Source: RMDB library RNAMAK, as collected in RNAgym.
This 207-nucleotide RNA was probed chemically with 2A3 and DMS.
The 2A3 profile rests on 3,924 reads.
For 2A3 the reverse transcriptase was SuperScript II with manganese.
For DMS the reverse transcriptase was MarathonRT.
The reactions ran in a buffer of 150 mM KOAc, 10 mM MgCl2 and 150 mM bicine (pH 8.5), at 24 C.
Reactivities are given for positions 27 through 156.
[RMDB]
RNA sequence: GGGAACGACUCGAGUAGAGUCGAAAAGCGUACUACCUGAGGUCAUAUGGAGAAAUGACUGGGCGAUUCCCAAAUAGGAAUCGCAUGGGAGUUUCGUUGAAAUAUGACUACCCACCAGGUAUCGCAAAAUCAAAACUGACUUCGGUCAGUUUUGAAAGAUAACUCUCUUCUUCGGAAGAGAGUUAUCAAAAGAAACAACAACAACAAC
Reactivity to 2A3 in 0.01 (KOAc 150mM, MgCl2 10mM, bicine 150mM(pH8.5), 24C), signal-to-noise 3, nucleotides 027 to 156: g010c010g030u090a110c040u000a000c010c000u020g020a030g010g000u000c000a000u000a010u030g030g010a030g000a050a000a000u020g010a010c010u010g030g030g000c010g000a000u010u010c050c010c000a150a280a060u210a060g000g000a010a010u010c000g000c030a020u020g010g010g010a040g000u000u010u010c050g080u120u030g020a010a020a000u000a000u000g000a000c000u010a020c020c030c000a040c010c020a000g050g010u020a050u300c010g000c020a030a010a030a090u010c000a000a000a000a000c000u000g000a000c010u020u050c220g070g000u010c000a000g000u000u000u000u000g000a010a000a000
Reactivity to DMS in 0.01 (KOAc 150mM, MgCl2 10mM, bicine 150mM(pH8.5), 24C), signal-to-noise 3, nucleotides 027 to 156: g020c040g010u000a070c090u010a010c000c000u040g020a190g020g020u000c020a010u000a040u020g010g000a300g020a030a070a030u000g000a300c010u000g000g000g050c000g030a020u000u000c000c000c000a020a180a230u000a020g010g000a010a000u000c010g060c000a020u000g000g010g010a300g000u000u000u000c020g020u000u010g010a190a150a040u000a010u010g010a020c020u000a040c030c000c030a300c050c000a010g010g000u000a010u010c010g030c020a080a040a130a040u000c000a010a010a010a020c000u000g000a020c000u000u000c300g020g010u010c000a040g020u000u000u000u000g000a010a070a170